[RMDB]
RNA sequence: GGGAACGACUCGAGUAGAGUCGAAAAGAUAUGGAUACGCUUGGGAGACACUCGGAAACGAGUGAAUCGAGGAUCAAGAUGUAUCCUAAGUCAAAUCUAACGCGAUUGUUCGCAAUCGCGUUAGAAACCUUUUAGUAAUGUUCGCAUUACUAAAAGGAAAAGAAACAACAACAACAAC
Reactivity to DMS in 0.01 (KOAc 150mM, MgCl2 10mM, bicine 150mM(pH8.5), 24C), signal-to-noise 4, nucleotides 027 to 126: g010a040u000a210u000g000g000a010u000a000c010g000c010u000u000g010g020g010a030g000a300c000a000c000u000c000g020g010a040a050a100c000g000a010g010u000g000a020a080u000c000g010a110g010g010a120u010c000a010a020g000a050u000g000u000a010u000c000c000u000a020a070g010u000c010a100a100a170u000c000u000a000a000c000g000c000g000a010u000u000g010u010u010c250g010c000a010a000u000c020g010c000g000u000u000a000g000a010a070a100
Reactivity to 2A3 in 0.01 (KOAc 150mM, MgCl2 10mM, bicine 150mM(pH8.5), 24C), signal-to-noise 4, nucleotides 027 to 126: g010a000u080a030u140g000g000a010u000a000c010g000c020u010u010g000g060g000a010g000a010c010a000c000u010c000g010g000a040a050a030c010g000a000g000u010g010a030a040u010c020g080a260g120g070a050u060c000a010a000g070a100u140g000u010a010u000c010c000u000a070a020g020u010c040a070a030a160u010c000u010a000a000c000g010c010g000a000u000u020g050u120u130c250g000c180a000a010u020c000g000c000g010u000u000a000g010a000a000a010
This 177-nucleotide RNA was probed chemically with DMS and 2A3. Conditions: 150 mM KOAc, 10 mM MgCl2 and 150 mM bicine (pH 8.5), 24 C. In probing experiments dimethyl sulfate is read out at A N1 and C N3, which are open when not base-paired.